[RMDB]
RNA sequence: GGGAACGACUCGAGUAGAGUCGAAAAGAUAGGUGCAGAGGUGCAGAGACUCAAUGGAACGCUGUUCUCAAAUGGAGUUGGUGAAGAGGGGUAUAUACAGAGUGUAUCAAACGAUUCACCCACAGCGUGUAGAUUUUUUCACGAACGAAUUAUUAUUCAUGUAUUUGUCGUUCGCGACAAAUACAUGAAAAGAAACAACAACAACAAC
Reactivity to 2A3 in 0.01 (KOAc 150mM, MgCl2 10mM, bicine 150mM(pH8.5), 24C), signal-to-noise 2, nucleotides 027 to 156: g050a010u190a040g050g000u060g040c060a010g010a040g060g050u020g000c000a000g030a010g020a110c000u080c070a000a070u090g000g000a060a000c040g030c180u040g050u160u050c060u020c010a160a170a080u180g020g000a010g070u080u060g030g000u030g010a040a000g010a010g020g000g030g030u070a020u000a000u020a090c090a020g160a060g150u070g030u040a010u030c010a150a040a000c040g010a010u020u040c030a010c000c040c000a040c020a000g040c030g010u000g030u050a020g000a040u050u000u050u040u160u200c020a010c040g060a120a000c050g050a120a040u100u090a070u200u060a070u040u110